[RMDB]
RNA sequence: GGGAACGACUCGAGUAGAGUCGAAAACUUUUUUGAGAUGACACACUCCAGGCGUGAAAGACCGCUGAUAAAAGUGUCCGCACCCCCUAACGGGUUACAAGUAGGGGAGGGCGAAAGUGGGUACAAGCACCAAAGUAGUGUUCGCACUACUUUGGUGAAAAGAAACAACAACAACAAC
Reactivity to DMS in 0.01 (KOAc 150mM, MgCl2 10mM, bicine 150mM(pH8.5), 24C), signal-to-noise 2, nucleotides 027 to 126: c010u000u000u010u040u020u000g000a010g020a050u010g000a020c060a080c020a090c010u010c020c300a200g000g020c000g020u000g000a230a250a030g000a140c080c000g040c020u000g000a080u000a070a010a260a170g000u000g020u020c000c010g000c050a080c020c000c000c000c030u000a010a070c060g000g010g010u000u020a070c130a220a120g010u000a020g010g010g000g010a010g010g000g000c010g000a020a040a090g000u000g000g010g000u010a080c230a080a140g000
This 177-nucleotide RNA was probed chemically with DMS. For DMS, 804 sequencing reads were counted. Values cover nucleotides 27 to 126. The RNA was probed in 150 mM KOAc, 10 mM MgCl2 and 150 mM bicine (pH 8.5) at 24 C.